[RMDB]
RNA sequence: GGGAACGACUCGAGUAGAGUCGAAAAGAAAAUAAAUCUGACGACAGUGGAAGUCAGGAACACUGGUGGAGACAUGACGACUAGUCAUGGAAAUAGUCGAUCCGUUAAAGCUAAUGCGAAAAGAAAAGGGUUUAGUAUAGUUCGCUAUACUAAACCCAAAAGAAACAACAACAACAAC
Reactivity to 2A3 in 0.01 (KOAc 150mM, MgCl2 10mM, bicine 150mM(pH8.5), 24C), signal-to-noise 4, nucleotides 027 to 126: g020a000a030a000a000u270a080a040a050u060c020u040g020a020c020g030a010c040a130g020u090g240g150a080a080g020u010c020a020g050g070a090a030c060a030c040u040g000g020u040g040g050a090g000a010c040a040u080g000a000c060g020a020c090u110a030g040u040c010a090u070g040g040a040a010a040u060a010g030u010c000g060a110u000c020c000g020u040u120a030a040a000g000c040u050a070a030u160g040c090g030a010a060a090a100g160a040a070a050a070
Reactivity to DMS in 0.01 (KOAc 150mM, MgCl2 10mM, bicine 150mM(pH8.5), 24C), signal-to-noise 3, nucleotides 027 to 126: g030a090a010a080a110u070a060a090a060u010c020u000g000a120c050g000a110c120a090g000u030g000g010a100a110g000u000c020a020g000g000a070a060c080a040c020u000g010g040u010g000g010a300g000a160c020a030u040g000a060c020g000a030c110u020a030g000u010c050a010u030g000g000a000a080a070u000a050g000u010c000g000a030u000c040c080g020u050u030a080a090a180g020c020u020a020a060u050g000c030g010a060a020a090a040g000a090a080a100a170

An RNA of 177 nucleotides, treated with 2A3 and DMS and read out base by base.
Reactivities are given for positions 27 through 126.
For 2A3, 3,884 sequencing reads were counted.